[RMDB]
RNA sequence: GGGAACGACUCGAGUAGAGUCGAAAAGAUAUGGAUACACUCAGUACCAUAUUCAGCGAAGAACCUCCUGAAGCUCGGAAACGAGCUUCAGGAGGGGAGCUGAUAUGGGAACUGUGUAUCCUAAGUCGUUAUAAGCUAUGUUCGCAUAGCUUAUAACAAAAGAAACAACAACAACAAC
Reactivity to DMS in 0.01 (KOAc 150mM, MgCl2 10mM, bicine 150mM(pH8.5), 24C), signal-to-noise 1, nucleotides 027 to 126: g000a120u000a300u020g000g010a020u010a010c000a000c010u010c050a060g030u000a210c010c000a010u000a020u020u010c010a030g010c010g000a110a260g020a210a280c010c020u030c020c020u010g020a010a020g040c000u020c000g010g010a060a150a290c020g000a080g000c020u000u000c010a040g000g020a000g000g020g010g000a060g040c000u000g010a020u000a000u000g000g000g000a130a080c120u000g010u000g010u000a000u000c000c000u010a010a090g010u010c110
Reactivity to 2A3 in 0.01 (KOAc 150mM, MgCl2 10mM, bicine 150mM(pH8.5), 24C), signal-to-noise 1, nucleotides 027 to 126: g020a020u200a010u260g000g000a010u000a000c010a020c010u050c010a000g020u040a010c000c000a000u010a030u180u280c010a000g010c040g160a300a030g010a070a020c020c000u000c020c000u020g000a000a000g000c020u000c000g080g020a150a110a100c040g000a020g190c070u000u000c010a000g020g010a000g000g000g030g000a000g000c000u000g000a000u000a000u010g010g000g040a000a000c000u030g010u010g000u030a000u000c000c000u000a020a030g030u040c070
Background:
Chemical mapping of a 177-nucleotide RNA with DMS and 2A3. The RNA was probed in 150 mM KOAc, 10 mM MgCl2 and 150 mM bicine (pH 8.5) at 24 C. The 2A3 profile rests on 4,108 reads. Source: RMDB library TTRINS, as collected in RNAgym. For 2A3 the reverse transcriptase was SuperScript II with manganese.